This 207-nucleotide RNA was probed chemically with DMS and 2A3. For 2A3, 2,328 sequencing reads were counted. For DMS, 1,720 sequencing reads were counted. It was measured as part of the RMDB library OK3TST.
[RMDB]
RNA sequence: GGGAACGACUCGAGUAGAGUCGAAAAUACAGGAAAACUGAAAGAAUUUUUCAGUGAAUACCCAUAUAUAUGCACAAUCUAGAUUCUACAGUUAACAUUUUACCAGACUUGCUUUAUCACAUGAAGACUACAUUUUAUCAUAAAAUGAGACCAUCCAGUUUUAAUGGAUGUUCGCAUCCAUUAAAACAAAAGAAACAACAACAACAAC
Reactivity to DMS in 0.01 (KOAc 150mM, MgCl2 10mM, bicine 150mM(pH8.5), 24C), signal-to-noise 1, nucleotides 027 to 156: u010a110c020a080g030g010a150a190a270a040c000u020g000a050a010a110g000a260a140u000u000u000u000u040c000a100g000u000g020a080a090u030a140c010c020c070a140u040a150u000a070u010a030u020g000c040a110c080a050a130u030c040u000a120g000a090u000u010c000u000a120c040a050g000u000u000a080a130c030a140u000u000u000u000a180c010c000a140g010a030c080u000u000g000c000u000u000u000a130u020c070a080c090a120u010g000a040a040g000a090c040u000a050c020a090u000u000u000u000a110u010c070a180u000a010a080a080a100u010g020a180g000a000c040c010a170u030c040c030a250
Reactivity to 2A3 in 0.01 (KOAc 150mM, MgCl2 10mM, bicine 150mM(pH8.5), 24C), signal-to-noise 3, nucleotides 027 to 156: u060a010c030a030g030g020a070a030a040a060c030u030g000a040a030a070g130a250a280u150u170u000u020u090c010a000g000u010g020a020a030u070a100c020c000c030a010u040a040u020a010u010a010u160g050c030a030c030a060a070u030c020u050a020g020a120u100u010c020u070a070c040a060g000u040u050a140a020c000a120u110u130u010u120a040c040c030a020g030a110c040u040u050g060c000u100u160u110a130u110c040a040c020a130u040g020a070a020g030a050c010u070a060c080a040u020u060u060u060a130u180c030a030u080a140a060a050a070u030g000a010g020a040c020c010a020u030c020c020a000